[RMDB]
RNA sequence: GGGAACGACUCGAGUAGAGUCGAAAAGCCCGGUAUUACGCCGUAUGCGGACGACGAAAGUAACGUGCCGGCGAAAGUCGUCGUUCUAGUGCAGGCACGUAGCACUAGUUCGCUACGUAUCGGGCAAGGGUAGUUGCGCGUUCGCGUGCGGCUACCCAAAAGAAACAACAACAACAAC
Reactivity to 2A3 in 0.01 (KOAc 150mM, MgCl2 10mM, bicine 150mM(pH8.5), 24C), signal-to-noise 9, nucleotides 027 to 126: g010c000c000c000g000g000u070a070u090u120a090c130g030c040c010g030u060a060u230g060c030g000g020a010c010g010a000c020g070a180a070a050g060u080a100a020c020g010u030g050c020c010g040g030c040g020a070a030a010g090u070c040g010u010c020g010u040u010c020u030a040g030u020g090c050a090g060g000c050a020c060g020u040a030g020c010a010c040u030a030g060u060u040c040g000c000u010a010c020g000u000a000u010c000g000g000g000c040a070a080
Reactivity to DMS in 0.01 (KOAc 150mM, MgCl2 10mM, bicine 150mM(pH8.5), 24C), signal-to-noise 9, nucleotides 027 to 126: g000c000c000c000g020g010u000a020u020u040a070c190g010c150c040g010u000a020u040g020c070g010g000a010c010g010a120c180g000a090a080a090g010u020a120a080c030g010u010g000c030c020g000g010c010g020a080a130a120g010u020c060g000u000c010g010u000u000c010u010a150g030u020g000c010a080g010g010c010a060c030g010u000a100g000c050a080c050u010a160g010u010u010c060g020c010u000a020c020g000u000a010u000c000g000g000g010c010a080a090